[RMDB]
RNA sequence: GGGAACGACUCGAGUAGAGUCGAAAAGAUCGGCCUCUGUCCCUCCAUGGUGAGCUCCAGGACCCCCAAAAGGAGGGGGGUGGGCCUUGGACCUCCAGGAGCCAUGGGAUCCGUGGAGUACCCGGGAGUUAAUAAUUGACUUCGGUCAAUUAUUAACAAAAGAAACAACAACAACAAC
Reactivity to DMS in 0.01 (KOAc 150mM, MgCl2 10mM, bicine 150mM(pH8.5), 24C), signal-to-noise 3, nucleotides 027 to 126: g000a130u000c050g000g020c140c010u010c060u000g010u010c070c120c000u000c010c000a080u010g020g020u000g010a140g010c170u000c020c020a070g020g020a120c000c000c000c010c030a070a080a120a100g020g010a120g010g000g000g020g000g010u010g020g010g000c010c010u000u000g000g000a030c070c040u000c000c090a070g000g000a040g010c100c050a060u000g000g020g010a090u000c010c020g010u000g000g010a130g020u000a090c040c010c000g000g010g000a150
Reactivity to 2A3 in 0.01 (KOAc 150mM, MgCl2 10mM, bicine 150mM(pH8.5), 24C), signal-to-noise 1, nucleotides 027 to 126: g020a100u110c010g040g030c040c030u030c060u050g070u110c020c000c000u000c030c020a110u040g020g010u020g060a100g030c020u010c000c020a050g050g020a140c000c000c000c000c020a030a090a020a080g180g040a100g020g010g000g020g010g010u080g020g080g000c000c000u010u040g030g020a000c000c000u020c000c010a000g020g020a020g050c010c020a060u090g040g020g040a040u000c000c010g020u040g020g050a040g040u040a050c000c000c000g050g040g010a090

Structure probing data (DMS and 2A3) for a 177-nucleotide construct. The data come from the RNA Mapping Database (RMDB), library 15KREP. Conditions: 150 mM KOAc, 10 mM MgCl2 and 150 mM bicine (pH 8.5), 24 C. For 2A3, 1,469 sequencing reads were counted. Reactivities are given for positions 27 through 126.